About this RNA:
This 207-nucleotide RNA was probed chemically with 2A3 and DMS. The data come from the RNA Mapping Database (RMDB), library M2RFPK. Conditions: 150 mM KOAc, 10 mM MgCl2 and 150 mM bicine (pH 8.5), 24 C.
RNA sequence: GGGAACGACUCGAGUAGAGUCGAAAAACUCCUAUUCCAACACGUCCUCGUCGUACAGAGUGGUAACAUGUGUCACCACAUAUCCAAGCUUGGGUACACGGGCUUGACCCAACCCCAUGGGCGGAUGAAAACCAGAUUACGUUCGCGUAAUCUGGAACUCUUCCACUUAGUUCGCUAAGUGGAAGAGAAAAGAAACAACAACAACAAC
Reactivity to 2A3 in 0.01 (KOAc 150mM, MgCl2 10mM, bicine 150mM(pH8.5), 24C), signal-to-noise 6, nucleotides 027 to 156: a000c080u050c060c000u080a090u100u090c040c020a050a020c050a040c090g060u050c020c060u090c040g110u020c020g040u120a060c050a060g140a040g080u030g000g040u080a060a040c060a190u180g100u070g050u160c040a010c050c000a030c030a050u120a020u030c000c000a010a020g020c050u040u010g000g000g000u020a010c030a010c040g000g000g030c020u140u220g150a300c000c000c000a010a000c010c000c000c010a010u010g000g020g000c020g010g000a010u070g070a050a040a020a040c000c000a000g000a000u000u000a000c010g020u030u060c220g000c000g130u000a000a010u000c000u000g000g000a000a000
Reactivity to DMS in 0.01 (KOAc 150mM, MgCl2 10mM, bicine 150mM(pH8.5), 24C), signal-to-noise 2, nucleotides 027 to 156: a060c030u010c040c040u020a060u000u000c030c040a090a080c090a140c080g010u020c020c000u000c070g050u000c040g040u000a110c070a060g000a110g030u000g040g020u000a060a010c020a210u000g040u000g030u000c010a040c010c000a030c010a100u000a100u000c010c030a060a300g030c010u000u000g020g010g000u000a190c150a120c060g010g010g000c020u010u010g000a090c000c000c000a030a110c080c000c000c040a070u000g020g000g010c220g050g010a100u000g010a100a060a100a170c000c000a000g000a020u010u000a000c010g000u000u010c300g020c000g010u000a000a020u000c000u030g000g010a010a040